The record gives the reactivity of an RNA of 177 nucleotides to 2A3 and DMS. 2A3 is a SHAPE reagent: it acylates the 2'-hydroxyl of flexible nucleotides of all four kinds. The DMS profile rests on 1,247 reads. The data come from the RNA Mapping Database (RMDB), library TTRDEL. For DMS the reverse transcriptase was MarathonRT. The 2A3 profile rests on 1,060 reads.
RNA sequence: GGGAACGACUCGAGUAGAGUCGAAAAGGUGAGUAAGAUAUGGAGCCACCGCCCAUACACAGCUUGGAUUUAUCGGAAACGAUUGUCAGCUGGUAUGUAACAAGUGGCUCCUAAGUCGGAGUAGGAAUCAACCAUGUCAGUUCGCUGACAUGGUUGAAAAAGAAACAACAACAACAAC
Reactivity to 2A3 in 0.01 (KOAc 150mM, MgCl2 10mM, bicine 150mM(pH8.5), 24C), signal-to-noise 1, nucleotides 027 to 126: g110g030u210g020a090g060u210a190a060g060a170u070a060u110g020g010a010g000c020c010a000c000c030g020c010c020c000a010u030a000c300a000c000a010g030c030u260u300g060g020a090u300u300u190a040u160c040g080g010a100a090a000c010g010a010u000u000g030u020c000a000g000c000u000g020g000u010a030u010g040u090a080a110c080a150a040g000u010g030g000c000u010c000c000u030a120a000g030u030c040g000g040a060g050u150a090g000g140a020a110
Reactivity to DMS in 0.01 (KOAc 150mM, MgCl2 10mM, bicine 150mM(pH8.5), 24C), signal-to-noise 2, nucleotides 027 to 126: g010g020u000g000a140g020u000a140a060g000a080u020a300u010g010g000a030g000c000c000a000c000c040g050c300c100c000a000u000a000c000a130c040a010g000c020u000u010g020g010a020u000u010u000a010u000c010g000g000a050a090a170c010g000a020u000u010g000u000c000a020g000c000u020g020g010u000a000u000g010u010a070a070c180a140a060g000u000g000g000c000u010c000c000u000a020a070g010u000c020g000g000a090g000u000a090g010g010a080a100